[RMDB]
RNA sequence: GGGAACGACUCGAGUAGAGUCGAAAAGAUAUGGAAGCCAUCUCUAGCGUGGACGACGAAGUACAUGAAACGUGGUCGGAAACGACCACGGAGUACGUGUACAGAGUCUCGGGUGGCUUCCUAAGUCCAUGCAAUACCGGUUCGCCGGUAUUGCAUGAAAAGAAACAACAACAACAAC
Reactivity to DMS in 0.01 (KOAc 150mM, MgCl2 10mM, bicine 150mM(pH8.5), 24C), signal-to-noise 3, nucleotides 027 to 126: g020a090u000a300u010g000g020a020a020g010c010c000a010u000c020u000c170u020a180g040c230g000u020g020g010a100c080g040a070c040g010a250a250g000u000a000c000a000u000g020a110a180a160c000g020u010g000g000u000c010g010g020a130a070a290c000g010a000c000c000a000c000g000g000a040g020u010a050c230g000u000g000u010a000c000a030g020a300g010u000c000u000c070g000g000g020u000g020g000c030u000u000c000c000u000a020a100g010u000c050
Reactivity to 2A3 in 0.01 (KOAc 150mM, MgCl2 10mM, bicine 150mM(pH8.5), 24C), signal-to-noise 2, nucleotides 027 to 126: g040a030u140a050u180g010g000a000a000g030c000c010a040u020c120u050c140u240a130g190c110g290u300g170g050a100c130g030a010c010g020a140a000g000u000a000c010a020u180g010a020a050a000c020g000u000g020g000u010c000g020g050a100a090a010c000g000a000c000c000a010c010g010g000a000g000u000a020c120g000u010g000u020a010c000a010g080a030g000u010c010u010c030g010g010g000u010g020g000c030u000u020c010c000u010a020a000g000u000c020
Chemical mapping of a 177-nucleotide RNA with DMS and 2A3.
2A3 is a SHAPE reagent: it acylates the 2'-hydroxyl of flexible nucleotides of all four kinds.
The data come from the RNA Mapping Database (RMDB), library TTRDES.
The RNA was probed in 150 mM KOAc, 10 mM MgCl2 and 150 mM bicine (pH 8.5) at 24 C.
DMS adducts were read by reverse transcription with MarathonRT.